RNA sequence: GGGAACGACUCGAGUAGAGUCGAAAACGAUCAGUACGUUCGCGUACUGAUCGAAGCUACUGGAGACAGUAGCAAGUCUAAGACCUUGUUAAGGGGAAACAAGGAAAAAUGGAGGAAGGUCGGACCUCCAUACUUAGACAACCCCUAACCGGCCAAAAGUCGCCUACUGAUUCGUCAGUAGGCGACUAAAAGAAACAACAACAACAAC
Reactivity to 2A3 in 0.01 (KOAc 150mM, MgCl2 10mM, bicine 150mM(pH8.5), 24C), signal-to-noise 1, nucleotides 027 to 156: c000g000a000u000c000a000g010u010a010c010g030u010u080c300g020c000g090u000a000c000u000g000a000u000c000g000a010a000g000c000u000a000c000u000g040g010a060g010a040c000a000g000u000a000g000c000a000a010g000u000c000u000a000a050g020a120c000c000u020u010g000u040u090a260a230g000g030g010g020a020a010a000c000a000a000g060g000a090a070a090a050a000u010g000g010a030g000g000a210a200g010g000u000c030g020g110a300c010c000u000c000c000a010u010a020c000u000u000a010g000a000c000a020a110c000c020c010c000u010a030a000c000c000g020g000c000c000a040a110a010
This 207-nucleotide RNA was probed chemically with 2A3. It was measured as part of the RMDB library OK3TST. For 2A3 the reverse transcriptase was SuperScript II with manganese. For 2A3, 1,291 sequencing reads were counted. The RNA was probed in 150 mM KOAc, 10 mM MgCl2 and 150 mM bicine (pH 8.5) at 24 C.